An RNA of 177 nucleotides, treated with 2A3 and read out base by base. For 2A3, 1,355 sequencing reads were counted. The data come from the RNA Mapping Database (RMDB), library M2PK50. The RNA was probed in 150 mM KOAc, 10 mM MgCl2 and 150 mM bicine (pH 8.5) at 24 C. Values are in units of 0.01, from 0 to 300, in steps of 10.
RNA sequence: GGGAACGACUCGAGUAGAGUCGAAAAGAGUCCUAUUUCGAUAGGACUCAACUAAAAUCAGCGGUAAAUAAUUAGCUGGCGUUACCGCUGAACGCCAGCAAACUAGCCUCGUCUUCGGACGAGGCAACUCUCAUCCUGCUUUCGAGCAGGAUGAGAGAAAAGAAACAACAACAACAAC
Reactivity to 2A3 in 0.01 (KOAc 150mM, MgCl2 10mM, bicine 150mM(pH8.5), 24C), signal-to-noise 1, nucleotides 027 to 126: g020a000g020u000c000c000u000a000u020u030u070c200g110a020u000a000g000g040a000c000u000c000a000a000c010u060a030a010a030a120u030c000a010g060c000g150g230u290a080a090a040u110a040a110u090u220a060g000c000u010g000g000c000g000u000u020a110c030c010g000c030u020g010a000a000c000g000c000c000a000g030c010a000a060a000c060u090a020g000c000c000u000c000g030u010c000u010u030c180g100g000a000c000g010a000g010g000c000a010a010